RNA sequence: GGGAACGACUCGAGUAGAGUCGAAAAGAUAUGGAAUAUACUGUCAUCAGCGAGGAUCUCGGAAACGAGGGAGCUGUUGACAGGUAUAUUCCUAAGUCAAACCAAGCUUUGUUCGCAAAGCUUGGAAGACAUAUACUCGGUUCGCCGAGUAUAUGUCAAAAGAAACAACAACAACAAC
Reactivity to DMS in 0.01 (KOAc 150mM, MgCl2 10mM, bicine 150mM(pH8.5), 24C), signal-to-noise 5, nucleotides 027 to 126: g000a040u000a300u010g000g000a010a010u000a000u000a010c010u000g000u000c000a010u000c000a000g020c000g010a080g010g000a020u000c000u000c000g000g000a160a110a190c000g000a020g000g000g010a020g020c000u000g010u010u000g000a000c010a010g000g000u000a000u000a000u000u000c000c000u010a020a080g010u000c040a110a130a240c000c000a010a010g000c000u000u000u000g000u000u020c230g010c010a010a010a010g000c000u000u000g010g010a050a050
Reactivity to 2A3 in 0.01 (KOAc 150mM, MgCl2 10mM, bicine 150mM(pH8.5), 24C), signal-to-noise 4, nucleotides 027 to 126: g030a020u090a050u180g000g000a000a000u010a000u010a010c010u020g000u000c000a020u000c010a010g010c000g070a270g070g000a020u000c000u000c000g000g060a110a070a060c010g010a010g010g000g000a010g000c000u000g010u010u000g000a000c000a000g010g000u010a000u000a000u000u000c000c000u000a090a020g020u010c050a050a040a100c000c000a010a000g000c000u030u020u030g030u080u170c220g000c170a000a000a000g010c000u000u000g010g000a010a020

The record gives the reactivity of an RNA of 177 nucleotides to DMS and 2A3. For 2A3, 16,447 sequencing reads were counted. The reactions ran in a buffer of 150 mM KOAc, 10 mM MgCl2 and 150 mM bicine (pH 8.5), at 24 C. Values cover nucleotides 27 to 126. For DMS the reverse transcriptase was MarathonRT.